Chemical mapping of a 177-nucleotide RNA with 2A3 and DMS. Values are in units of 0.01, from 0 to 300, in steps of 10. DMS adducts were read by reverse transcription with MarathonRT. The data come from the RNA Mapping Database (RMDB), library TTRDEL.
RNA sequence: GGGAACGACUCGAGUAGAGUCGAAAAGAUAUGGAGAAUUACGAUAAGAUGAGUGUCGGAAACGACACUAUCUUUUGACGUAACUCCUAAGUCAAAAUCGAGGAAUCGCUUCGGCGAUUCCUCGAAAGAUUCUUUUCCUGUUCGCAGGAAAAGAAUCAAAAGAAACAACAACAACAAC
Reactivity to 2A3 in 0.01 (KOAc 150mM, MgCl2 10mM, bicine 150mM(pH8.5), 24C), signal-to-noise 2, nucleotides 027 to 126: g000a030u080a040u180g010g000a020g030a240a300u080u000a010c010g030a020u090a160a030g010a010u120g300a010g050u000g000u000c000g010g030a070a060a040c000g000a000c060a000c000u010a000u000c000u020u050u030u080g120a060c000g000u020a010a010c010u020c000c000u050a190a000g060u020c030a060a010a010a300u070c000g040a020g030g000a000a000u030c000g040c060u090u190c300g040g000c020g000a000u000u020c010c000u000c010g000a000a000a000
Reactivity to DMS in 0.01 (KOAc 150mM, MgCl2 10mM, bicine 150mM(pH8.5), 24C), signal-to-noise 2, nucleotides 027 to 126: g000a060u020a300u010g000g000a010g000a180a100u000u000a000c000g010a100u000a010a000g010a000u000g010a040g040u000g020u000c010g020g020a110a070a170c000g000a020c010a020c000u000a010u000c000u000u000u000u000g000a140c050g000u000a030a030c000u000c000c000u030a020a160g020u000c030a150a100a120a140u000c010g000a000g030g000a000a000u000c000g000c000u010u030c210g020g020c010g010a020u000u000c000c000u000c000g000a000a020a040